[RMDB]
RNA sequence: GGGAACGACUCGAGUAGAGUCGAAAAAGCUGGUUCGCCAGCUCAAAGUCCUAAGUCACUCCUCGAGGCUAGCGGGAGCUCUGUCGGAAACGACAGAGCGAGGAUCGCUAGCUACCCACCGAGAAGUGAUAUGGAAAGAAGGGCGUUUCGACGCCAAGACUGCCUCAUAGUUCGCUAUGAGGCAGUCAAAAGAAACAACAACAACAAC
Reactivity to 2A3 in 0.01 (KOAc 150mM, MgCl2 10mM, bicine 150mM(pH8.5), 24C), signal-to-noise 1, nucleotides 027 to 156: a000g020c000u020g000g030u050u110c230g070c110c010a010g000c000u000c020a110a130a000g120u030c020c000u090a110a020g010u010c000a000c000u020c020c010u000c000g000a000g000g020c000u010a000g000c020g010g000g000a000g010c000u000c000u000g000u000c000g040g000a100a050a070c010g000a000c000a000g010a010g010c010g000a010g000g010a000u000c000g000c000u000a000g010c000u010a010c010c010c000a090c030c000g000a000g010a030a010g010u000g000a000u030a050u080g000g040a080a040a160g190a040a110g120g030g020c040g010u030u100u130c200g090a040c000g010c010c000a000a010